[RMDB]
RNA sequence: GGGAACGACUCGAGUAGAGUCGAAAAGUGCUACAUUUACUGAGACUACGAUUAUUGCCACGGCAGACGCCCGUGGGCUGAUCCAGUCCUCUAGAGCCCACGCAAUUGUGGCUUUGACCCGCCACACCUUGCAACCAGAAUUCGUUCUGGUUGCAAGAAAAGAAACAACAACAACAAC
Reactivity to 2A3 in 0.01 (KOAc 150mM, MgCl2 10mM, bicine 150mM(pH8.5), 24C), signal-to-noise 1, nucleotides 027 to 126: g080u030g050c000u070a100c070a120u070u140u040a140c050u090g040a020g000a070c010u070a060c110g050a080u060u100a060u080u300g060c000c010a010c010g020g000c030a110g030a300c110g060c010c000c000g030u060g040g000g020c010u000g010a000u000c010c000a000g000u030c010c010u010c030u010a040g030a010g100c000c000c040a010c000g070c030a040a150u070u160g010u010g000g000c000u030u010u010g020a020c000c030c000g000c000c020a030c010a010c000
Reactivity to DMS in 0.01 (KOAc 150mM, MgCl2 10mM, bicine 150mM(pH8.5), 24C), signal-to-noise 2, nucleotides 027 to 126: g010u000g040c040u010a100c110a070u000u000u000a090c060u000g000a150g000a020c020u000a100c210g010a020u000u000a040u010u010g020c010c020a020c060g010g000c020a240g010a110c300g020c270c030c020g030u010g000g020g000c050u000g010a060u000c010c050a110g000u000c020c040u000c040u010a050g000a080g010c080c130c050a050c210g020c110a080a080u000u010g010u000g000g010c030u000u000u010g000a110c210c150c210g000c010c020a000c000a070c300